[RMDB]
The record gives the reactivity of an RNA of 177 nucleotides to DMS and 2A3. For DMS the reverse transcriptase was MarathonRT. The RNA was probed in 150 mM KOAc, 10 mM MgCl2 and 150 mM bicine (pH 8.5) at 24 C.
RNA sequence: GGGAACGACUCGAGUAGAGUCGAAAAUUAAAAUUUGAGGCAUCAAGUGCAAGGGUAGUCGGCAGGGUCAAGGUCGGGAAGAAUGAGGACUCUAAACCAACCAAGCUUAUGAGUGGAAUACAAAAAAGAUACAUCUACAGUUCGCUGUAGAUGUAUCAAAAGAAACAACAACAACAAC
Reactivity to DMS in 0.01 (KOAc 150mM, MgCl2 10mM, bicine 150mM(pH8.5), 24C), signal-to-noise 3, nucleotides 027 to 126: u000u000a060a050a080a090u000u000u000g000a110g010g030c060a050u000c090a050a060g000u000g000c070a060a080g010g000g030u000a050g010u010c060g020g020c070a030g010g000g000u000c070a040a060g000g000u000c070g010g010g000a080a080g000a060a020u010g020a130g010g000a090c030u000c050u000a040a070a120c040c040a060a090c060c040a050a100g020c040u000u000a060u000g010a060g030u000g030g000a070a040u010a030c080a000a020a070a060a050a060
Reactivity to 2A3 in 0.01 (KOAc 150mM, MgCl2 10mM, bicine 150mM(pH8.5), 24C), signal-to-noise 3, nucleotides 027 to 126: u030u030a010a030a040a080u080u090u110g050a010g000g020c020a020u010c060a100a100g060u010g040c020a040a050g050g000g000u040a050g050u020c020g010g010c050a020g030g040g010u050c050a030a030g040g020u050c020g030g030g000a020a030g040a030a060u100g010a040g050g030a020c020u000c010u080a110a080a060c020c000a010a020c010c020a030a020g030c030u130u110a090u160g040a030g040u030g000g080a070a040u130a200c090a020a160a000a000a000a000